[RMDB]
RNA sequence: GGGAACGACUCGAGUAGAGUCGAAAAGAUAUGGACAAACCGAAAGAGCAACAGCUAACGUAACAUCGCUUCGGAAACGAAGCGUGGUUAGACAUGCUUGUAAGGUUUGUCCUAAGUCAAAUCGGUCCGUAUAGGUUUCGACCUAUACGGACCGAAAGAGGUCCAUUAACUUCGGUUAAUGGACCUCAAAAGAAACAACAACAACAAC
Reactivity to 2A3 in 0.01 (KOAc 150mM, MgCl2 10mM, bicine 150mM(pH8.5), 24C), signal-to-noise 1, nucleotides 027 to 156: g030a010u020a020u030g000g000a000c000a000a000a010c020c040g130a120a110a000g020a000g010c000a020a120c030a060g050c000u010a010a000c040g150u150a020a040c050a150u190c050g000c000u010u000c000g040g000a030a110a020c000g000a000a000g000c000g000u010g000g010u000u010a000g030a060c020a020u120g000c000u080u060g080u140a040a030g010g000u000u000u000g000u000c000c000u000a000a000g010u000c040a000a000a130u050c000g000g000u000c000c000g000u030a000u000a000g050g040u020u100u150c300g090a010c000c020u000a000u000a010c020g000g000a000c000c010g000a000a000a010

This 207-nucleotide RNA was probed chemically with 2A3. The RNA was probed in 150 mM KOAc, 10 mM MgCl2 and 150 mM bicine (pH 8.5) at 24 C. Reactivities are given for positions 27 through 156.